[RMDB]
RNA sequence: GGGAACGACUCGAGUAGAGUCGAAAAGAUAUGGACGCUCGAUAAGCUGCAUUCGGAAACGAAUGGCAGCUUUUGACGAGCAGUCCUAAGUCAAACAAGACAACUUACUUCGGUAAGUUGUCUUGAAUCUCAGUACGAAGUUCGCUUCGUACUGAGAAAAAGAAACAACAACAACAAC
Reactivity to 2A3 in 0.01 (KOAc 150mM, MgCl2 10mM, bicine 150mM(pH8.5), 24C), signal-to-noise 1, nucleotides 027 to 126: g000a020u080a040u110g000g030a010c010g010c010u000c000g080a120u040a190a030g030c020u020g000c030a010u000u010c000g020g020a050a070a030c020g000a000a020u050g170g000c000a000g000c000u020u010u000u020g010a000c000g010a020g010c060a010g010u010c000c000u010a100a000g040u030c010a030a040a130c000a020a010g010a000c000a000a000c000u000u010a000c000u060u110c220g050g000u020a010a000g010u010u060g000u000c000u010u000g000a000a010
Reactivity to DMS in 0.01 (KOAc 150mM, MgCl2 10mM, bicine 150mM(pH8.5), 24C), signal-to-noise 3, nucleotides 027 to 126: g010a050u000a300u000g000g020a020c000g010c000u000c010g010a170u000a030a020g010c010u010g000c000a060u000u000c000g000g000a100a070a170c000g010a010a010u000g010g020c000a010g010c010u000u000u000u000g000a160c080g000a010g020c000a050g020u000c000c000u000a020a070g000u000c040a140a090a300c000a000a000g000a010c000a010a000c000u000u000a000c000u000u010c190g000g020u010a000a000g000u000u000g000u000c000u000u000g000a060a100